[RMDB]
RNA sequence: GGGAACGACUCGAGUAGAGUCGAAAAAAGUCUGGUGCCAGCAGCCGCGGUAAUUCCAGCUCCAGGAGUGUCAUAGUGCAUUGCUGCAUUUAAAAGGUCCGUAGUCAGUGUUGACAGGGAUGCUAGAACCUUGUGAUCCAUUCGUGGAUCACAAGGUAAAAGAAACAACAACAACAAC
Reactivity to 2A3 in 0.01 (KOAc 150mM, MgCl2 10mM, bicine 150mM(pH8.5), 24C), signal-to-noise 3, nucleotides 027 to 126: a000a000g050u050c000u000g000g000u010g070c040c000a010g000c000a000g040c030c030g040c030g000g020u030a020a070u170u020c010c000a010g000c010u010c010c010a030g020g070a050g030u060g020u060c110a130u120a130g090u130g070c020a020u030u100g010c010u010g000c030a020u100u120u140a070a210a020a020g080g000u030c010c030g000u090a020g010u040c030a030g050u020g070u300u090g030a010c030a030g000g000g060a030u050g100c020u040a030g020a040
Reactivity to DMS in 0.01 (KOAc 150mM, MgCl2 10mM, bicine 150mM(pH8.5), 24C), signal-to-noise 3, nucleotides 027 to 126: a060a020g000u010c000u000g000g010u000g000c070c030a050g020c050a060g000c050c060g030c070g000g010u000a050a140u010u010c020c020a090g010c030u020c040c010a070g000g000a060g010u000g010u010c040a110u010a100g020u020g010c000a050u010u010g020c080u000g010c050a080u010u010u040a040a070a080a050g010g030u010c010c010g000u010a130g000u000c020a060g020u050g020u000u000g010a040c030a150g000g000g000a070u010g000c020u000a070g000a170

This 177-nucleotide RNA was probed chemically with 2A3 and DMS. The 2A3 profile rests on 1,580 reads. 2A3 adducts were read by reverse transcription with SuperScript II with manganese. DMS adducts were read by reverse transcription with MarathonRT. Conditions: 150 mM KOAc, 10 mM MgCl2 and 150 mM bicine (pH 8.5), 24 C.